[RMDB]
RNA sequence: GGGAACGACUCGAGUAGAGUCGAAAACAGUGGCACAAUCUCGGCUCACUGCAGCCUCUGCCUCCUGUGCUCAAGAAAUUCUUGUGCCUCCGCCUCCAGAGUAGCUGGGAUCACAGGUGCGCAUAUACCAUCUCACUCACUUCGGUGAGUGAGAUGGAAAAGAAACAACAACAACAAC
Reactivity to DMS in 0.01 (KOAc 150mM, MgCl2 10mM, bicine 150mM(pH8.5), 24C), signal-to-noise 1, nucleotides 027 to 126: c090a050g010u000g000g000c010a110c090a100a130u010c120u000c150g010g010c030u010c020a110c060u000g030c110a040g000c060c000u000c060u000g000c040c010u000c020c010u000g000u030g000c080u000c040a110a030g000a030a070a120u000u000c050u000u010g000u000g000c010c010u000c060c100g010c010c000u000c020c040a050g000a190g020u000a020g020c010u000g000g010g000a060u040c080a040c100a010g000g020u010g000c070g010c020a060u000a070u010a210
Reactivity to 2A3 in 0.01 (KOAc 150mM, MgCl2 10mM, bicine 150mM(pH8.5), 24C), signal-to-noise 1, nucleotides 027 to 126: c020a040g030u080g000g010c030a020c020a110a290u060c080u050c200g040g000c020u050c090a100c110u120g050c050a030g000c000c010u030c110u100g020c020c020u050c030c010u040g020u050g000c020u040c050a050a020g070a070a180a020u120u070c030u000u080g020u020g030c010c000u050c050c030g080c000c000u000c010c000a010g010a020g090u080a030g040c020u050g000g020g000a040u050c030a010c000a010g060g020u030g010c110g000c050a000u050a000u050a110